Structure probing data (2A3 and DMS) for a 170-nucleotide construct. For 2A3, 28,810 sequencing reads were counted. Source: RMDB library 15KLIB, as collected in RNAgym. For DMS, 33,987 sequencing reads were counted. The reactions ran in a buffer of 150 mM KOAc, 10 mM MgCl2 and 150 mM bicine (pH 8.5), at 24 C.
[RMDB]
RNA sequence: GGGAACGACUCGAGUAGAGUCGAAAAUUUCUCGAGUCUUUGCUAAUACAGGCAGUGUUUGCUACACUCCUAUAGAUGAGAUACCCUAUAAGAGUUUCUCUGAUAGUGGUUGCAUUCUUCCAUCUGAUACGUUCAGGGUUCGCCCUGAACAAAAGAAACAACAACAACAAC
Reactivity to 2A3 in 0.01 (KOAc 150mM, MgCl2 10mM, bicine 150mM(pH8.5), 24C), signal-to-noise 9, nucleotides 027 to 129: u050u060u010c010u000c000g000a000g000u000c010u040u040u050g100c040u070a100a090u180a190c070a050g030g050c010a030g000u010g030u020u120u140g060c040u070a000c010a010c020u030c010c010u060a090u100a080g080a030u040g000a020g000a070u070a060c000c000c010u010a020u020a060a040g040a000g020u030u150u100c060u000c000u000g050a040u010a020g120u180g090g000u040u070g030c060a110u110u000c010u090u030c020c000a020u040c030u020g060a050u040a190c100
Reactivity to DMS in 0.01 (KOAc 150mM, MgCl2 10mM, bicine 150mM(pH8.5), 24C), signal-to-noise 7, nucleotides 027 to 129: u000u000u000c040u020c030g040a000g010u020c010u030u000u000g030c000u000a060a040u060a090c260a070g010g030c110a050g030u010g020u000u030u040g000c130u040a000c000a070c000u020c010c020u000a040u040a060g030a060u020g020a100g010a060u030a030c020c030c010u000a060u000a110a030g020a030g020u040u020u060c040u010c010u000g010a050u000a010g000u000g030g030u030u030g000c150a090u000u000c070u030u010c110c040a000u000c040u030g020a100u000a080c210